[RMDB]
RNA sequence: GGGAACGACUCGAGUAGAGUCGAAAAACACAACUGUUCUCAACAGUGCAUUUACCGGCAAAACCACUACACGUUAUGAGCGUAGCCAUAGAAUUGACUUGCCUGCUGGCAGCCAAUGGCAAAUCCGUGUUCGUAGGCUUACGCCAAAUGCAACGUCUCUACGUUCCACUUUCGAGUGGAACGUAGAAAAAGAAACAACAACAACAAC
Reactivity to DMS in 0.01 (KOAc 150mM, MgCl2 10mM, bicine 150mM(pH8.5), 24C), signal-to-noise 1, nucleotides 027 to 156: a110c080a080c050a110a240c020u000g030u000u000c060u010c070a080a060c020a020g060u010g020c020a030u000u000u020a090c050c030g020g020c010a110a040a050a100c020c030a130c010u000a080c000a000c040g020u020u020a090u000g000a150g020c070g010u000a120g030c040c000a140u000a210g030a060a120u000u010g030a040c000u010u020g000c000c000u010g000c270u010g040g050c050a060g000c010c010a050a080u010g020g000c000a050a100a060u000c030c090g000u010g000u000u000c030g040u010a250g040g000c000u000u000a070c070g000c010c000a010a040a100u000g040c010a040a090c070g000u000c090
Reactivity to 2A3 in 0.01 (KOAc 150mM, MgCl2 10mM, bicine 150mM(pH8.5), 24C), signal-to-noise 4, nucleotides 027 to 156: a000c120a020c040a090a080c080u060g030u100u020c100u010c040a000a050c040a060g000u020g030c020a010u020u030u070a150c080c000g030g000c020a020a000a050a070c010c010a040c030u050a020c030a000c010g090u160u140a110u250g050a050g070c130g080u050a010g000c010c010a050u060a060g110a070a180u110u100g030a080c020u040u120g000c000c010u100g180c060u080g050g000c000a020g000c010c020a030a020u010g000g000c010a040a080a070u000c010c000g040u020g020u060u040c070g030u060a100g000g000c010u030u020a050c060g000c000c000a010a000a000u030g010c010a050a050c050g070u020c010